[RMDB]
Notes: An RNA of 177 nucleotides, treated with 2A3 and read out base by base. Conditions: 150 mM KOAc, 10 mM MgCl2 and 150 mM bicine (pH 8.5), 24 C.
RNA sequence: GGGAACGACUCGAGUAGAGUCGAAAAGCCAUGCGUCACGCUAUCUAGGUACUCAUGGUACGUACAUCAUGUGAUCAGUCAUGUGCGAUCACGAUCACGGAUCCAUGCAUGACUCUCUAGAGCUCGGCGAGGGAAUGCGCUUCGGCGCAUUCCCUCGAAAAGAAACAACAACAACAAC
Reactivity to 2A3 in 0.01 (KOAc 150mM, MgCl2 10mM, bicine 150mM(pH8.5), 24C), signal-to-noise 1, nucleotides 027 to 126: g010c000c030a020u110g000c070g030u050c070a020c110g060c020u030a070u120c060u050a050g050g000u030a020c000u000c000a030u000g030g050u020a100c090g090u040a010c000a190u030c050a090u240g010u000g030a010u030c010a050g110u030c010a050u190g170u110g170c090g050a000u000c110a050c090g030a150u090c100a010c030g020g010a030u080c000c070a000u090g000c050a030u120g030a180c000u000c000u000c010u000a030g010a010g040c110u120c080g010g000